Overview
An RNA of 177 nucleotides, treated with DMS and 2A3 and read out base by base. For 2A3, 20,499 sequencing reads were counted. Source: RMDB library OK2TST, as collected in RNAgym.

[RMDB]
RNA sequence: GGGAACGACUCGAGUAGAGUCGAAAACGCGACGCCGACCCACGCGACGAUGAACACGCCCUGCCAUGCGAGUGCCUGCAGCAGCUUCGAGAAGAUGUCGGCCAUCAUCAGCGCGUAGACCACCGCAUAAUCAGUGGAUAUUCGUAUCCACUGAUUAAAAAGAAACAACAACAACAAC
Reactivity to DMS in 0.01 (KOAc 150mM, MgCl2 10mM, bicine 150mM(pH8.5), 24C), signal-to-noise 9, nucleotides 027 to 126: c070g010c030g010a120c120g010c030c020g010a120c050c040c040a110c090g010c030g000a070c070g010a060u000g000a090a080c140a120c130g000c020c030c020u000g000c040c060a070u000g000c050g010a090g020u000g010c090c030u000g010c060a060g020c040a080g000c040u000u010c080g010a120g010a080a090g000a060u000g000u000c060g010g010c040c050a060u000c040a060u000c060a100g010c030g000c040g020u000a060g000a120c060c030a090c070c040g010c110a140
Reactivity to 2A3 in 0.01 (KOAc 150mM, MgCl2 10mM, bicine 150mM(pH8.5), 24C), signal-to-noise 7, nucleotides 027 to 126: c030g020c020g030a040c030g030c030c020g050a070c000c010c030a020c020g020c010g030a050c030g060a090u090g070a070a020c050a020c090g020c000c010c000u030g030c030c020a050u090g020c020g030a080g080u100g030c000c030u050g010c020a030g000c000a010g010c020u060u080c070g100a090g040a110a020g040a020u090g050u080c040g040g010c020c010a040u050c000a010u010c010a010g050c000g010c020g030u010a020g040a020c010c020a030c030c030g030c040a040